[RMDB]
RNA sequence: GGGAACGACUCGAGUAGAGUCGAAAACCGGCGAGAGGGCCGCGAGCUCCGCCGUCCACCAGUCGGGCGGCGACCUCGUCGGGAACAGCACCUCGUUGCAGAUCCUGAGCGCGAUAGCGUCAGCUGAGCGUGAAAGCCGAUUCGUCGGCUUUCACGCAAAAGAAACAACAACAACAAC
Reactivity to DMS in 0.01 (KOAc 150mM, MgCl2 10mM, bicine 150mM(pH8.5), 24C), signal-to-noise 1, nucleotides 027 to 126: c050c000g020g010c000g000a010g060a250g020g000g080c000c050g020c120g040a100g000c120u000c000c030g000c000c000g000u000c000c000a040c180c040a240g040u000c120g000g050g030c040g070g000c000g010a140c300c000u000c030g030u000c070g000g000g000a030a070c120a000g030c090a010c020c050u000c160g000u000u000g040c110a120g000a100u000c010c000u020g000a080g050c110g000c020g000a040u050a010g000c000g000u040c060a020g000c070u000g000a300
Reactivity to 2A3 in 0.01 (KOAc 150mM, MgCl2 10mM, bicine 150mM(pH8.5), 24C), signal-to-noise 3, nucleotides 027 to 126: c010c000g000g000c000g010a020g000a140g010g030g010c030c000g050c120g100a120g020c000u060c060c000g000c000c010g010u020c000c000a060c000c090a110g160u150c060g010g000g020c000g020g000c000g060a060c010c000u000c000g040u000c000g030g000g010a110a000c030a010g000c010a040c010c030u060c040g100u040u090g010c030a000g020a050u070c010c030u060g010a110g110c010g000c000g040a050u160a170g000c020g050u060c020a050g000c050u060g040a010